This 177-nucleotide RNA was probed chemically with 2A3 and DMS.
[RMDB]
RNA sequence: GGGAACGACUCGAGUAGAGUCGAAAAGUUGUGAGGCAGCGUCGUCUACGACGUUCCACAAUGAAGGGGUCGCCAGGCUUUGGAAGUACGUGGACGAUGUAGAGUCUGGACGACAUGACCAGGCAUGGGUUUAAUCAUGGUUCGCCAUGGUUGAGUCAAAAGAAACAACAACAACAAC
Reactivity to 2A3 in 0.01 (KOAc 150mM, MgCl2 10mM, bicine 150mM(pH8.5), 24C), signal-to-noise 8, nucleotides 027 to 126: g020u020u030g010u010g040a130g030g030c060a010g010c020g010u010c000g000u020c050u080a060c030g010a000c040g040u020u000c000c000a020c020a010a070u120g050a080a050g030g000g010g020u020c000g010c020c020a020g020g020c000u030u020u060g020g010a030a000g020u060a050c030g010u040g020g030a020c010g010a020u040g020u050a020g000a000g030u000c000u000g000g030a050c000g010a000c010a040u080g030a020c000c010a000g030g000c010a030u080g050
Reactivity to DMS in 0.01 (KOAc 150mM, MgCl2 10mM, bicine 150mM(pH8.5), 24C), signal-to-noise 9, nucleotides 027 to 126: g010u000u000g000u000g000a090g010g010c090a130g010c010g000u000c000g020u010c050u010a030c020g020a040c060g020u000u000c010c000a060c170a090a060u030g010a200a130g000g000g000g010u000c030g010c080c080a060g000g000c040u000u010u000g000g000a060a080g010u020a060c040g010u000g000g000a030c020g010a040u010g010u020a070g010a090g010u000c000u000g000g000a120c040g000a080c090a070u030g010a100c000c000a060g000g010c060a090u020g010
About this RNA: The data come from the RNA Mapping Database (RMDB), library OK1LIB. The 2A3 profile rests on 24,461 reads. Reactivities are given for positions 27 through 126. High DMS reactivity at an A or C suggests that its Watson-Crick edge is free. The RNA was probed in 150 mM KOAc, 10 mM MgCl2 and 150 mM bicine (pH 8.5) at 24 C.